Structure probing data (DMS and 2A3) for a 177-nucleotide construct. The 2A3 profile rests on 10,609 reads.
RNA sequence: GGGAACGACUCGAGUAGAGUCGAAAAGGGCGACAGCGCCUUGCGUGAUUUUAGCCAACGCUUUGAUACCGUGCAGGUGGCUGAUAUUCGCAUCAGUAGCGAUGAAAUAGCCGCUGCUGCCGGGCGCCUUCUAAACCUAGUUCGCUAGGUUUAGAAGAAAAGAAACAACAACAACAAC
Reactivity to DMS in 0.01 (KOAc 150mM, MgCl2 10mM, bicine 150mM(pH8.5), 24C), signal-to-noise 9, nucleotides 027 to 126: g000g000g010c030g010a140c190a120g020c030g010c010c020u000u000g030c030g020u010g010a080u010u000u010u000a060g020c040c060a110a090c150g000c030u010u010u000g010a090u010a160c070c060g010u010g020c050a100g010g020u000g010g010c000u000g000a070u010a120u000u000c010g010c010a100u010c160a110g010u010a100g010c010g000a020u000g000a070a110a180u000a070g010c060c010g020c010u000g010c050u000g000c110c090g000g000g000c100g010c100
Reactivity to 2A3 in 0.01 (KOAc 150mM, MgCl2 10mM, bicine 150mM(pH8.5), 24C), signal-to-noise 6, nucleotides 027 to 126: g020g010g030c030g030a080c070a100g060c030g010c020c000u010u070g010c010g030u070g080a160u050u030u070u240a030g010c020c020a080a020c040g010c000u080u060u100g090a100u110a140c020c050g040u150g020c030a030g010g070u030g030g000c000u000g010a030u010a080u100u040c010g000c020a050u060c040a140g220u210a030g010c000g010a010u030g030a080a120a090u080a040g030c050c010g030c030u080g020c010u010g000c010c000g030g000g020c020g040c010